[RMDB]
Conditions: 150 mM KOAc, 10 mM MgCl2 and 150 mM bicine (pH 8.5), 24 C. Structure probing data (DMS and 2A3) for a 177-nucleotide construct. For 2A3 the reverse transcriptase was SuperScript II with manganese.
RNA sequence: GGGAACGACUCGAGUAGAGUCGAAAAGCGGCUACAGCAACGGCUUCCUGAGCUAUCGAGGCGACAUCGGCUGCUACAAGGACGGCGUCGAGUACGUCUGGGCCUCCAACGUCGCGCUGACGUGGUCGCGCACGUGGGAAUUCGUUCCCACGUGCGCAAAAGAAACAACAACAACAAC
Reactivity to DMS in 0.01 (KOAc 150mM, MgCl2 10mM, bicine 150mM(pH8.5), 24C), signal-to-noise 3, nucleotides 027 to 126: g010c050g000g000c000u000a070c090a080g030c090a070a090c190g000g010c090u000u020c010c040u000g010a250g030c050u000a090u010c100g000a110g000g020c000g010a050c050a160u000c050g010g000c040u040g020c010u010a100c080a110a110g000g000a100c080g010g000c010g000u000c080g020a060g010u010a060c020g010u010c000u000g010g000g010c060c040u000c060c030a080a040c060g010u000c080g010c070g020c040u000g010a090c100g010u000g010g000u010c050
Reactivity to 2A3 in 0.01 (KOAc 150mM, MgCl2 10mM, bicine 150mM(pH8.5), 24C), signal-to-noise 3, nucleotides 027 to 126: g040c010g050g000c030u100a080c070a050g050c040a090a060c080g050g000c020u090u100c010c020u070g030a050g000c020u040a050u220c050g110a050g010g070c000g010a020c030a140u050c040g020g000c050u070g010c000u070a070c060a140a070g100g030a010c090g000g040c020g020u060c040g020a040g080u080a060c010g040u010c000u030g000g040g050c000c030u000c030c020a090a060c060g030u030c040g010c060g020c130u060g010a020c040g110u080g060g020u120c030